Chemical mapping of a 177-nucleotide RNA with 2A3 and DMS.
RNA sequence: GGGAACGACUCGAGUAGAGUCGAAAAUUUGGUCUUGUGAAUCCACGUGCAACUAAAAGGAGUGCUAACAGUGACUUUUGGUACGCUGUGUAUAUGCAGAAAAAGAUAUUAGACACCAAUUAAGCCGUGAACAUAAGUCAUUCGUGACUUAUGUUCAAAAAGAAACAACAACAACAAC
Reactivity to 2A3 in 0.01 (KOAc 150mM, MgCl2 10mM, bicine 150mM(pH8.5), 24C), signal-to-noise 8, nucleotides 027 to 126: u040u020u050g020g000u010c030u060u110g040u020g080a070a020u030c030c010a020c030g090u060g000c030a070a040c020u060a010a010a050a000g060g020a110g050u120g070c050u080a110a080c050a120g020u040g090a060c000u030u050u020u090g050g010u050a060c090g000c030u030g000u010g050u030a020u010a030u290g040c050a030g140a090a110a010a010a000g090a020u110a060u080u070a040g030a030c030a020c070c020a010a010u070u060a090a020g030c010c030g070
Reactivity to DMS in 0.01 (KOAc 150mM, MgCl2 10mM, bicine 150mM(pH8.5), 24C), signal-to-noise 7, nucleotides 027 to 126: u020u010u010g010g010u000c040u020u010g020u010g010a100a080u010c050c020a060c030g020u000g020c050a070a040c040u010a020a040a040a060g010g000a120g030u010g000c060u010a090a080c170a100g020u010g010a080c010u000u000u000u010g010g010u010a080c100g020c010u010g020u000g000u000a060u000a070u020g000c030a030g010a060a080a070a080a070g000a090u010a070u010u020a080g010a100c070a060c020c020a020a040u010u020a090a110g010c020c040g000
As a SHAPE reagent, 2A3 marks flexible, mostly unpaired nucleotides at the ribose 2'-OH.
Source: RMDB libraries RFM100 and RFMREP, as collected in RNAgym.
Conditions: 150 mM KOAc, 10 mM MgCl2 and 150 mM bicine (pH 8.5), 24 C.
Values cover nucleotides 27 to 126.
2A3 adducts were read by reverse transcription with SuperScript II with manganese.